[RMDB]
RNA sequence: GGGAACGACUCGAGUAGAGUCGAAAAAUAAACCGGAAGCGACGCAGCAAGCCCGACCGGAACGGCAACCGGAACCCGGAUCUCAACCCGGUUGGGACGCACCUGAGAGACGGGAAUGCGUAAAAAAGAGGAACUAAUAGUUCGCUAUUAGUUCCUCAAAAGAAACAACAACAACAAC
Reactivity to 2A3 in 0.01 (KOAc 150mM, MgCl2 10mM, bicine 150mM(pH8.5), 24C), signal-to-noise 2, nucleotides 027 to 126: a000u110a010a070a010c010c000g020g020a080a020g120c050g060a040c040g010c080a060g000c040a060a080g040c010c010c020g010a000c010c010g000g030a020a030c000g040g000c030a100a100c010c010g000g040a080a100c020c020c030g000g060a120u020c040u010c050a030a060c000c000c010g080g000u030u080g020g010g000a000c020g010c020a040c000c020u060g020a110g000a010g040a140c040g030g000g020a050a090u070g000c000g020u070a030a050a000a020a010a060
Reactivity to DMS in 0.01 (KOAc 150mM, MgCl2 10mM, bicine 150mM(pH8.5), 24C), signal-to-noise 3, nucleotides 027 to 126: a130u010a030a050a120c010c020g000g010a210a140g000c120g010a070c070g020c070a080g010c070a120a120g020c020c000c000g000a120c010c020g000g000a080a090c120g010g000c070a040a130c010c010g000g010a100a080c110c010c010g020g000a090u000c020u000c050a080a080c200c000c000g020g000u030u000g000g000g000a030c080g020c050a070c050c040u000g010a080g000a130g000a140c060g020g010g000a050a030u000g010c020g000u010a010a050a080a020a050a100